[RMDB]
RNA sequence: GGGAACGACUCGAGUAGAGUCGAAAAAAGCACGUCGCAAUGACGUAAGGUGGGACUUUUCCCUAGGGUUUGAGCGGUCGAACCCAGGGGGAGUGUGAUCCAGGUACCGCCGUAGAAACUGGAUUACGACGUCUACCCGGGAUUCAAACCCGGUCCCCUGACCCUAUAACUUCGGUUAUAGGGUCAGAAAAGAAACAACAACAACAAC
Reactivity to 2A3 in 0.01 (KOAc 150mM, MgCl2 10mM, bicine 150mM(pH8.5), 24C), signal-to-noise 2, nucleotides 027 to 156: a000a010g120c050a010c000g000u020c020g030c210a160a300u300g000a010c010g000u010a020a040g050g030u120g000g000g000a030c020u080u030u050u130c000c000c070u110a120g020g000g000u030u010u020g010a050g020c100g140g060u300c060g070a050a020c000c020c140a100g000g060g000g000g000a040g030u080g010u020g000a010u000c000c000a020g000g010u030a010c000c050g070c040c060g020u060a050g080a080a290a010c000u010g000g000a000u030u000a000c080g010a020c020g180u060c050u090a170c010c000c020g010g000g000a040u080u090c020a040a010a070c000c000c000g000g010u000c000c000c000